[RMDB]
RNA sequence: GGGAACGACUCGAGUAGAGUCGAAAACAACUUUUCAGGGAAGAAGAGACAUAAGGGAUCUUCUAAUCUAACUUCUCUUUUGAAGGUAGGAAAAAUUGAGAUAAGAAAACUGACUCAGAUAAGUCUCAGGGAGCUGGCGUGGCUUAACAAACACCCACAUCACUCAUGCUUUCGAGCAUGAGUGAUGAAAAGAAACAACAACAACAAC
Reactivity to 2A3 in 0.01 (KOAc 150mM, MgCl2 10mM, bicine 150mM(pH8.5), 24C), signal-to-noise 2, nucleotides 027 to 156: c050a020a040c020u040u100u190u230c100a110g000g000g030a040a000g020a030a010g020a070g030a040c010a120u230a110a120g100g060g000a070u030c000u060u020c000u100a060a060u010c060u040a060a110c000u090u000c010u030c000u070u130u090u090g050a010a020g040g000u110a030g070g070a050a080a000a080a050u070u170g010a020g010a040u120a190a080g090a090a200a120a080c160u150g050a040c030u010c090a020g010a150u080a010a130g020u000c010u010c010a000g050g030g000a040g010c060u040g020g000c020g010u010g000g040c010u040u100a030a020c020a040a100a000c050a030c020c000c020a030